[RMDB]
RNA sequence: GGGAACGACUCGAGUAGAGUCGAAAAGAGGUUUAUCGAGGUUUUCGGCGGAUGCCUCCCGGCUGGAGCGAUGACAGCCGCAAGUCCUCUCUUAAAACAAAGGGGUGACCCUUUGGACAAAGGGGAGCACCAUAUCUACGUUCGCGUAGAUAUGGUGAAAAGAAACAACAACAACAAC
Reactivity to 2A3 in 0.01 (KOAc 150mM, MgCl2 10mM, bicine 150mM(pH8.5), 24C), signal-to-noise 3, nucleotides 027 to 126: g040a010g060g030u080u120u120a150u180c030g010a060g010g040u040u060u110u160c060g080g020c040g080g010a030u060g010c010c010u000c030c000c010g010g000c000u010g010g030a080g080c070g050a050u150g060a030c010a000g010c000c000g000c030a030a030g100u030c020c000u000c010u000c010u050u090a050a060a010a030c000a000a000a000g000g000g010g020u040g050a020c000c000c000u010u010u000g020g010a020c050a010a070a010g010g000g000g010a010g020
Reactivity to DMS in 0.01 (KOAc 150mM, MgCl2 10mM, bicine 150mM(pH8.5), 24C), signal-to-noise 7, nucleotides 027 to 126: g010a040g000g010u000u000u010a060u010c040g010a070g010g010u000u000u000u000c030g020g010c070g000g000a070u000g010c010c010u000c010c100c010g010g000c000u000g000g000a140g020c130g010a110u010g010a150c030a030g000c010c010g020c200a040a100g000u010c050c010u000c010u000c040u000u000a060a090a110a100c010a000a020a020g000g000g000g000u020g010a230c000c000c000u000u000u000g000g000a070c190a030a080a080g000g000g010g000a080g000